The record gives the reactivity of an RNA of 177 nucleotides to 2A3 and DMS. For 2A3, 6,249 sequencing reads were counted. Reactivities are given for positions 27 through 126.
[RMDB]
RNA sequence: GGGAACGACUCGAGUAGAGUCGAAAACCGCCUGCCGCAUCAGGCCAGAUCGUAUAAUCGGACGCCUCAGCGAACUGCUGUAUCCUGUUAAGACGGAUGCACUCUGACGGUCUGAUGGCCCGCAUCGGCAUGAGUGAGGAUUCGUCCUCACUCAUGCAAAAGAAACAACAACAACAAC
Reactivity to 2A3 in 0.01 (KOAc 150mM, MgCl2 10mM, bicine 150mM(pH8.5), 24C), signal-to-noise 8, nucleotides 027 to 126: c000c000g010c030c030u050g020c010c050g060c030a060u040c010a040g000g020c000c010a040g000a150u070c030g030u110a090u080a270a100u130c030g030g010a020c040g070c030c040u050c030a030g010c020g090a160a130c040u150g020c020u000g030u010a020u000c000c010u060g070u150u200a140a030g120a030c060g010g010a010u030g020c010a030c020u080c060u070g040a060c030g030g030u010c020u010g050a050u080g030g030c000c030c010g060c040a090u080c070g040
Reactivity to DMS in 0.01 (KOAc 150mM, MgCl2 10mM, bicine 150mM(pH8.5), 24C), signal-to-noise 2, nucleotides 027 to 126: c000c030g010c160c040u020g020c020c050g030c040a030u010c080a080g000g000c020c000a050g000a030u050c090g000u060a060u040a060a060u010c100g020g000a060c120g020c080c090u000c100a070g000c150g020a090a190c150u000g050c260u010g030u030a000u010c020c000u050g000u000u060a130a100g020a090c170g000g000a020u000g000c000a160c060u010c010u030g000a060c140g090g010u000c040u000g000a010u000g030g020c030c030c030g000c030a100u000c070g000